[RMDB]
RNA sequence: GGGAACGACUCGAGUAGAGUCGAAAAAGCAGUUGCAAAGAAAUGCCCAGAUGGAGGACAGAGGGCCAAACCACCCCAGUGAAUUCAUAACAGGAGAUAACUUGCUUAAGACCUGACUGUUUUUAAAAAAGAGUGUCACAUUCGUGUGACACUCUUUAAAAGAAACAACAACAACAAC
Reactivity to DMS in 0.01 (KOAc 150mM, MgCl2 10mM, bicine 150mM(pH8.5), 24C), signal-to-noise 2, nucleotides 027 to 126: a060g000c000a070g070u010u000g010c100a040a040a080g030a030a120a060u070g000c030c050c010a150g000a070u000g000g000a050g000g000a110c040a030g000a130g000g000g000c070c080a130a030a050c000c070a140c000c000c050c000a140g000u000g000a090a090u010u000c040a140u010a000a140c230a060g000g010a110g040a130u000a010a010c020u000u010g000c150u080u010a010a090g000a220c020c000u010g030a050c120u010g010u000u000u040u000u020a000a070a040